The data come from the RNA Mapping Database (RMDB), libraries RFM100 and RFMREP. An RNA of 177 nucleotides, treated with 2A3 and DMS and read out base by base.

RNA sequence: GGGAACGACUCGAGUAGAGUCGAAAAACGGACCGCUACGGCGGUCCGAACAUGGGUGAGGUACGAGGAAACAGUCUGAUAGUCACUGAAGACUGAUUAGAUCCAACUCUGAUCUCAGCAAAGCCAAAGAAACAAAUACAUUCGUGUAUUUGUUUCUAAAAGAAACAACAACAACAAC
Reactivity to 2A3 in 0.01 (KOAc 150mM, MgCl2 10mM, bicine 150mM(pH8.5), 24C), signal-to-noise 9, nucleotides 027 to 126: a000c000g000g010a000c010c000g000c010u050a050c260g120g000c000g000g010u000c000c000g000a000a000c010a070u130g070g000g030u030g010a020g010g010u080a040c030g010a020g010g040a080a090a030c010a020g020u000c000u010g020a040u050a050g060u100c060a060c290u200g120a150a020g000a030c000u020g030a020u010u040a030g030a030u020c020c010a010a030c010u000c000u050g030a020u000c000u000c010a030g050c060a080a080a020g040c010c020a070a130
Reactivity to DMS in 0.01 (KOAc 150mM, MgCl2 10mM, bicine 150mM(pH8.5), 24C), signal-to-noise 8, nucleotides 027 to 126: a100c030g010g010a010c000c000g020c010u020a080c200g020g020c010g020g030u000c010c010g000a010a020c130a110u020g020g010g020u010g000a080g000g000u010a030c080g010a180g000g010a110a090a150c260a110g000u010c010u000g000a060u010a030g000u010c050a130c240u020g020a150a060g000a010c010u010g010a040u000u000a030g000a050u010c040c070a090a260c080u000c010u000g000a050u010c000u010c000a040g000c100a060a060a130g010c040c030a080a120